[RMDB]
RNA sequence: GGGAACGACUCGAGUAGAGUCGAAAAUGAGCAGCUGAGCACCCACUCUGUUGGUCAUGUGCGGCAACGGUUCACAUCACCGUACCUCUCUGAGUGGGAAAAGCCAAUGUCUCUGAUGUGUGAGCCGGAGGCAGGUACUAUUCGUAGUACCUGCCUCAAAAGAAACAACAACAACAAC
Reactivity to 2A3 in 0.01 (KOAc 150mM, MgCl2 10mM, bicine 150mM(pH8.5), 24C), signal-to-noise 7, nucleotides 027 to 126: u150g010a020g010c020a010g020c100u050g030a020g040c030a120c010c010c000a000c000u000c010u040g300u290u170g080g050u130c100a060u100g000u020g010c000g030g000c070a070a020c030g020g020u050u060c040a020c000a070u090c030a040c030c000g010u020a020c000c020u060c000u010c030u050g000a010g020u020g000g000g040a010a130a000a000g010c000c020a030a030u030g120u070c010u000c010u050g090a100u090g010u010g000u000g010a010g010c020c000g020
Reactivity to DMS in 0.01 (KOAc 150mM, MgCl2 10mM, bicine 150mM(pH8.5), 24C), signal-to-noise 3, nucleotides 027 to 126: u020g000a050g000c020a030g020c140u000g000a110g020c070a120c020c010c010a020c000u020c020u000g000u030u020g010g000u020c130a040u000g040u010g020c040g000g000c300a080a120c040g000g010u000u000c030a000c050a030u010c140a170c010c010g000u000a040c010c100u010c040u020c040u010g000a000g030u000g000g000g000a040a040a070a070g000c020c040a040a040u010g000u050c010u000c020u000g000a080u020g020u000g000u000g000a040g010c000c020g010